Annotation
Chemical mapping of a 207-nucleotide RNA with DMS and 2A3. Conditions: 150 mM KOAc, 10 mM MgCl2 and 150 mM bicine (pH 8.5), 24 C. DMS (dimethyl sulfate) methylates the pairing face of unpaired adenines and cytosines. It was measured as part of the RMDB library RNAMAK.
[RMDB]
RNA sequence: GGGAACGACUCGAGUAGAGUCGAAAACCAGAUUCGUCUGGCACAACGCGUACUACCCAGACAUGAACCGCCAUGGGAGUAGGAUCCCAAAUAGGAUCCUACGAAGAACAUGGUCGGUUCAACAGCUGGGUAUCGCACAAUGAGACUUCGGUCUCAAAUCUGUGUCUAUGUUCGCAUAGACACAGAUAAAAGAAACAACAACAACAAC
Reactivity to DMS in 0.01 (KOAc 150mM, MgCl2 10mM, bicine 150mM(pH8.5), 24C), signal-to-noise 3, nucleotides 027 to 156: c010c010a050g020a050u000u010c290g020u000c000u020g010g050c030a120c060a080a110c080g000c040g030u010a080c100u010a010c010c000c010a030g020a060c090a300u010g000a010a010c000c000g000c020c000a000u000g010g000g010a230g010u000a010g010g020a020u000c000c000c000a030a120a220u010a080g000g020a020u000c000c010u020a010c000g010a060a170g020a060a190c000a010u000g010g020u010c040g070g000u000u000c000a050a050c080a210g020c010u010g000g000g030u000a000u000c050g050c000a080c120a170a130u010g000a070g010a030c000u000u010c170g050g020u000c010u000c010a050a080
Reactivity to 2A3 in 0.01 (KOAc 150mM, MgCl2 10mM, bicine 150mM(pH8.5), 24C), signal-to-noise 8, nucleotides 027 to 156: c000c000a000g000a010u090u150c200g060u010c130u020g040g010c100a030c040a200a210c200g000c020g040u100a110c050u000a010c020c000c000a000g030a070c050a060u060g000a010a000c000c000g000c000c000a010u000g010g000g010a040g010u000a000g000g010a000u030c020c040c060a170a240a030u300a060g000g000a010u000c000c000u000a000c000g000a050a010g010a000a000c000a000u000g000g090u150c060g000g000u010u000c000a000a010c010a010g040c000u010g000g000g000u000a010u080c000g040c000a010c040a040a220u120g000a000g000a000c000u060u100c300g100g010u000c010u000c000a050a070
Values are in units of 0.01, from 0 to 300, in steps of 10.